RNA sequence: GGGAACGACUCGAGUAGAGUCGAAAACUCUAGGGGUUCGCCCCUAGAGAAAUAAAAGCUCUACAAACACCAAAAACAAGAGCAUGGUGAAAGAAUAAAUAAAAAGCAUGGCGUUCGCGCCAUGCAACCAUUAGUCUUAGUUCGCUAAGACUAAUGGAAAAGAAACAACAACAACAAC
Reactivity to DMS in 0.01 (KOAc 150mM, MgCl2 10mM, bicine 150mM(pH8.5), 24C), signal-to-noise 2, nucleotides 027 to 126: c000u000c000u000a000g010g010g000g030u000u010c300g000c010c010c000c000u010a010g000a000g000a000a100a060u010a060a110a220a230g000c000u010c000u000a060c150a110a110a200c030a050c020c030a010a110a080a100a130c070a130a020g000a060g030c040a020u000g020g000u010g000a160a120a060g000a150a060u010a090a020a070u030a070a060a050a130a100g000c000a010u010g000g010c010g020u030u000c150g010c010g020c000c010a000u000g000c000a090a050
Reactivity to 2A3 in 0.01 (KOAc 150mM, MgCl2 10mM, bicine 150mM(pH8.5), 24C), signal-to-noise 3, nucleotides 027 to 126: c000u010c000u000a000g000g020g000g010u050u040c190g080c000c000c000c000u000a000g010a000g000a000a010a000u040a000a070a010a030g020c000u010c000u080a090c060a090a140a040c020a010c020c030a030a050a060a060a090c150a180a060g020a020g070c030a040u030g040g000u040g040a150a070a060g060a100a140u200a210a080a030u160a020a090a080a000a010g020c000a000u010g000g000c010g020u030u070c240g010c000g000c090c000a000u010g000c010a000a010